This 177-nucleotide RNA was probed chemically with 2A3 and DMS. For DMS the reverse transcriptase was MarathonRT. For 2A3 the reverse transcriptase was SuperScript II with manganese. It was measured as part of the RMDB library M2PK90.

RNA sequence: GGGAACGACUCGAGUAGAGUCGAAAAAGAAAGAGCGUAGCACACACUCAGACUAAGUCUGUCACACACCUACGCUAAACAUCUUAGUGUGUGAUCGAGAUAUCGAUGUGUGUGUAAGAUGAAAAAAGCUAAAGUAGACGUUCGCGUCUACUUUAGCAAAAGAAACAACAACAACAAC
Reactivity to 2A3 in 0.01 (KOAc 150mM, MgCl2 10mM, bicine 150mM(pH8.5), 24C), signal-to-noise 2, nucleotides 027 to 126: a010g160a010a070a010g090a020g000c000g020u010a000g010c000a000c000a000c000a000c010u060c070a020g020a010c060u080a150a090g060u000c010u010g020u010c000a000c000a000c000a000c000c000u020a000c000g000c010u010a000a030a020c050a000u030c000u000u000a000g000u000g020u010g010u010g010a020u020c050g050a030g070a140u210a050u140c050g010a020u090g010u000g000u000g020u000g000u040a000a000g000a010u020g060a050a000a010a010a000a000
Reactivity to DMS in 0.01 (KOAc 150mM, MgCl2 10mM, bicine 150mM(pH8.5), 24C), signal-to-noise 2, nucleotides 027 to 126: a090g000a140a090a040g020a220g000c040g020u000a080g000c000a000c000a020c000a040c010u000c060a160g020a050c270u010a090a150g030u000c000u000g000u000c020a000c010a000c000a000c010c010u010a030c000g010c020u010a030a100a110c020a010u000c010u000u000a060g010u000g000u000g000u000g000a030u010c230g000a020g000a100u000a200u000c000g000a070u010g020u000g010u010g010u000g000u020a000a020g000a030u000g000a020a060a090a080a100a040